[RMDB]
The record gives the reactivity of an RNA of 177 nucleotides to 2A3 and DMS. The reactions ran in a buffer of 150 mM KOAc, 10 mM MgCl2 and 150 mM bicine (pH 8.5), at 24 C. DMS adducts were read by reverse transcription with MarathonRT.
RNA sequence: GGGAACGACUCGAGUAGAGUCGAAAAUGCAUGGAUCCGGACAACUAAAGUCGUGGGUGAGCACCCUUUGGUGAUCGAGCGGGUGCGGGGCAUAGGUUGCCAUUUUGUGCUGCUGAUUACUGCGGCCACUCUAGGCAUCUUUCGAGAUGCCUAGAGUAAAAGAAACAACAACAACAAC
Reactivity to 2A3 in 0.01 (KOAc 150mM, MgCl2 10mM, bicine 150mM(pH8.5), 24C), signal-to-noise 2, nucleotides 027 to 126: u070g040c020a010u080g050g050a060u000c040c000g000g050a030c010a130a070c080u230a180a090a070g040u060c050g080u100g030g060g020u040g010a020g030c010a000c000c000c000u060u090u100g110g000u130g020a060u140c040g040a030g020c020g070g000g000u010g010c050g040g010g000g010c040a030u040a090g080g090u100u050g030c020c000a060u100u090u040u100g080u100g050c030u000g000c010u020g020a190u060u200a130c050u050g030c020g010g000c000c010
Reactivity to DMS in 0.01 (KOAc 150mM, MgCl2 10mM, bicine 150mM(pH8.5), 24C), signal-to-noise 2, nucleotides 027 to 126: u010g000c090a080u010g010g000a050u000c050c040g010g010a060c060a100a090c130u000a040a090a090g010u000c060g030u010g010g010g010u000g000a150g010c020a080c000c020c040u000u010u010g020g010u000g000a070u010c070g020a070g010c130g010g030g000u000g010c010g010g000g010g020c050a060u000a130g010g020u000u010g000c030c020a100u000u010u000u000g020u000g050c000u000g010c010u010g000a150u020u010a110c120u000g010c020g030g000c020c110